[RMDB]
RNA sequence: GGGAACGACUCGAGUAGAGUCGAAAACGAGGGGUGGGCGAAAGUUGCGAUGAGACCGUAACUUUCGUAGUCAUUGAUAAAGGGGCAGGUCUCGCUCUUUUGUCAUUGCGGUUGCCUAGAGGCAUGGAAAACCAUGACAGGUUCGCCUGUCAUGGAAUCUUCUUUAUGUGUUCGCACAUAAAGAAGAAAAAGAAACAACAACAACAAC
Reactivity to 2A3 in 0.01 (KOAc 150mM, MgCl2 10mM, bicine 150mM(pH8.5), 24C), signal-to-noise 5, nucleotides 027 to 156: c060g020a080g000g020g010g060u200g020g010g000c030g000a010a000a000g000u000u000g000c020g020a090u150g120a070g080a110c060c020g000u000a000a000c000u000u010u010c020g000u000a010g020u020c010a010u000u030g010a000u020a010a010a010g000g010g020g000c030a030g040g190u100c090u090c120g000c000u010c000u010u010u010u010g010u000c010a010u000u050g010c070g050g020u060u060g000c000c000u100a110g040a180g060g000c040a020u060g050g050a050a100a020a030c000c000a000u000g000a000c000a000g000g030u060u060c130g060c060c000u000g000u000c000a000u000g000g000a000a000
Reactivity to DMS in 0.01 (KOAc 150mM, MgCl2 10mM, bicine 150mM(pH8.5), 24C), signal-to-noise 2, nucleotides 027 to 156: c090g000a140g000g000g010g020u010g000g000g020c010g010a010a020a030g020u000u000g020c020g010a130u000g010a180g020a300c110c000g020u000a020a040c010u000u000u000c010g000u010a060g020u010c030a090u000u020g010a040u000a020a020a040g000g000g010g000c000a120g030g010u000c090u010c080g000c010u020c020u010u000u000u000g010u000c020a050u000u000g000c040g010g020u000u000g000c010c050u000a080g000a140g040g010c030a080u000g000g010a090a070a130a120c000c000a020u010g000a020c000a010g010g020u000u000c300g030c030c000u000g000u000c000a010u000g000g000a020a010